[RMDB]
RNA sequence: GGGAACGACUCGAGUAGAGUCGAAAAAAUCGUCGACGCAUCGACGACGGUCCUGCCAUGAGCCCGUAACGAGGACAUGUCGCCUCGAAUGGCGUCGGGGAGCCGGCAGCUUACCCCAAGGAUGAGCAAAAGAAUGAAACGUUCGCGUUUCAUUCAACAACUGUACAUCGUUCGCGAUGUACAGUUGAAAAGAAACAACAACAACAAC
Reactivity to DMS in 0.01 (KOAc 150mM, MgCl2 10mM, bicine 150mM(pH8.5), 24C), signal-to-noise 1, nucleotides 027 to 156: a000a020u000c020g010u010c000g010a100c150g020c250a130u000c000g020a000c000g020a010c020g010g000u010c000c000u010g050c000c000a210u000g010a130g040c070c000c140g010u010a090a110c070g000a130g020g010a050c030a090u010g030u000c080g110c010c030u000c060g000a120a040u020g030g010c010g060u000c080g000g000g020g010a060g040c080c090g000g000c090a120g030c050u000u000a050c000c000c000c040a010a190g020g010a060u020g000a140g010c060a090a060a080a160g010a030a010u000g000a030a000a010c000g040u000u000c300g010c050g000u010u010u000c000a000u000u000c000a070a120
Reactivity to 2A3 in 0.01 (KOAc 150mM, MgCl2 10mM, bicine 150mM(pH8.5), 24C), signal-to-noise 3, nucleotides 027 to 156: a000a000u070c060g050u010c000g050a040c050g020c100a110u070c020g020a030c000g000a000c010g000g020u030c000c000u000g040c040c000a100u070g050a030g030c020c020c020g060u050a070a030c040g020a010g020g010a030c050a100u170g050u130c090g020c040c020u040c040g050a130a090u100g120g010c040g030u050c010g000g010g000g000a000g070c030c000g120g010c020a030g030c030u020u100a140c000c010c000c000a000a030g110g000a060u150g050a000g050c050a050a030a030a060g000a010a000u010g000a000a010a010c000g040u080u040c220g040c010g090u000u040u000c000a000u000u010c000a010a010